[RMDB]
RNA sequence: GGGAACGACUCGAGUAGAGUCGAAAAUGGGAUCGACCUAAAUUGAUGUUAGAUAGUUAUUAUCCUCUACCGAGAAGAAUGUUGAUUUACCAUGUUCGUAGCGAGCUCCAGCGCUCGCAUGCGAAUAGACACGUCCGGGUCAUCCAAACUCUGUAGACCGUACUUAUUACUUCGGUAAUAAGUACGGAAAAGAAACAACAACAACAAC
Reactivity to DMS in 0.01 (KOAc 150mM, MgCl2 10mM, bicine 150mM(pH8.5), 24C), signal-to-noise 2, nucleotides 027 to 156: u010g030g060g010a080u000c000g050a050c020c010u000a040a100a180u010u010g000a070u020g010u000u000a080g000a060u000a050g020u000u000a080u000u020a210u000c030c020u030c020u000a200c080c060g010a110g030a090a080g050a120a100u000g020u000u000g000a070u000u010u010a080c040c000a120u000g020u000u000c010g070u010a160g020c000g010a010g020c020u020c080c250a140g040c290g000c000u000c020g000c010a000u030g010c000g010a020a010u000a060g000a090c020a100c100g050u000c070c040g030g020g000u020c010a070u000c030c040a080a080a070c060u000c030u000g000u000a130g000a180
Reactivity to 2A3 in 0.01 (KOAc 150mM, MgCl2 10mM, bicine 150mM(pH8.5), 24C), signal-to-noise 3, nucleotides 027 to 156: u080g030g000g010a020u040c050g020a050c020c020u100a080a050a100u120u140g070a060u140g050u130u090a060g010a110u040a060g050u200u150a180u180u070a020u100c020c020u000c030u060a060c040c040g040a020g000a090a060g080a090a100u140g020u040u010g030a060u020u050u120a090c020c020a050u070g010u020u000c000g010u000a010g010c000g000a000g010c000u130c200c120a160g080c050g010c070u020c000g000c000a000u040g000c000g020a000a010u000a020g020a010c030a000c070g100u050c070c020g000g010g010u000c020a020u000c020c000a030a040a140c040u020c040u070g060u060a020g040a070